[RMDB]
RNA sequence: GGGAACGACUCGAGUAGAGUCGAAAAUAACGUGCGCGUUUAAGUUUGGGGUUAGUUUUAGAUUUAGGUUUACAUUUAUAUGCUCGGUUGAAGGUGAAUUUUAGCUUAAACUUAAGUAUGGCGUGUAAUGUGGGUUAAAAUUUAAAUGGAAGGUGGGCUAGUUUAUAUCAUUCGUGAUAUGAAUUAGAAAAGAAACAACAACAACAAC
Reactivity to DMS in 0.01 (KOAc 150mM, MgCl2 10mM, bicine 150mM(pH8.5), 24C), signal-to-noise 4, nucleotides 027 to 156: u000a060a090c070g020u000g020c040g040c040g010u000u000u000a060a110g020u000u000u010g020g010g030g020u000u000a060g020u010u010u000u000a080g010a110u000u000u000a090g030g020u000u000u000a040c050a090u000u000u000a100u010a070u040g010c020u000c060g030g020u000u010g010a060a090g020g030u000g020a040a060u000u010u000u000a020g010c010u000u000a020a030a030c030u000u000a030a050g010u000a030u000g010g010c040g020u000g020u000a040a090u000g010u000g000g020g010u000u000a000a000a000a100u000u000u010a040a060a100u000g000g010a060a060g000g020u000g020g020g010
Reactivity to 2A3 in 0.01 (KOAc 150mM, MgCl2 10mM, bicine 150mM(pH8.5), 24C), signal-to-noise 1, nucleotides 027 to 156: u040a010a010c020g010u000g000c030g000c010g020u000u020u060a030a010g000u000u010u060g010g000g000g000u020u030a010g020u010u020u030u040a020g000a020u010u010u080a030g000g020u010u020u010a000c000a020u040u070u020a090u030a010u080g020c030u000c010g010g030u030u020g020a020a000g000g000u010g010a020a010u020u000u020u040a000g000c000u020u020a020a000a000c000u020u020a000a010g010u010a030u020g020g000c010g000u010g010u000a030a060u030g010u020g000g020g000u000u050a000a000a000a000u030u050u020a020a020a000u010g010g010a020a000g000g020u030g000g000g000